[RMDB]
RNA sequence: GGGAACGACUCGAGUAGAGUCGAAAAUGUGUUCUGUGAUACUGCAGCAGGUAUAAAUGUUGCAUCAGAGGUGGAGCAGUGCAACCAAAACAUAUCAACCUCUACUUACCCUUGCAAAGUUAGCACAGGUACGGAAAGUGUUCGCACUUUCCGUACCAAAAGAAACAACAACAACAAC
Reactivity to 2A3 in 0.01 (KOAc 150mM, MgCl2 10mM, bicine 150mM(pH8.5), 24C), signal-to-noise 2, nucleotides 027 to 126: u080g050u000g020u140u080c030u000g040u020g020a030u060a150c030u050g000c000a000g010c010a020g110g100u300a080u080a170a100a050u050g000u020u050g040c010a040u070c020a010g110a060g020g030u040g000g040a030g000c060a040g000u020g060c020a030a070c050c010a030a040a110a040c060a020u120a010u160c000a010a020c020c000u000c040u020a040c000u030u080a080c000c020c000u070u000g000c010a080a060a120g040u130u120a060g020c030a040c070a070
Reactivity to DMS in 0.01 (KOAc 150mM, MgCl2 10mM, bicine 150mM(pH8.5), 24C), signal-to-noise 1, nucleotides 027 to 126: u000g010u010g020u010u010c000u000g040u010g000a070u000a070c100u000g000c000a100g060c040a010g000g000u000a090u000a040a080a150u040g010u010u000g000c030a030u000c090a100g000a080g010g000u000g000g000a080g030c080a100g010u000g010c060a020a090c150c070a030a140a040a040c130a050u000a030u000c050a120a080c080c000u000c060u000a000c080u000u000a120c050c000c020u000u010g000c050a020a100a060g000u000u000a070g000c050a040c160a080

The record gives the reactivity of an RNA of 177 nucleotides to 2A3 and DMS.
For 2A3 the reverse transcriptase was SuperScript II with manganese.
Conditions: 150 mM KOAc, 10 mM MgCl2 and 150 mM bicine (pH 8.5), 24 C.
Values cover nucleotides 27 to 126.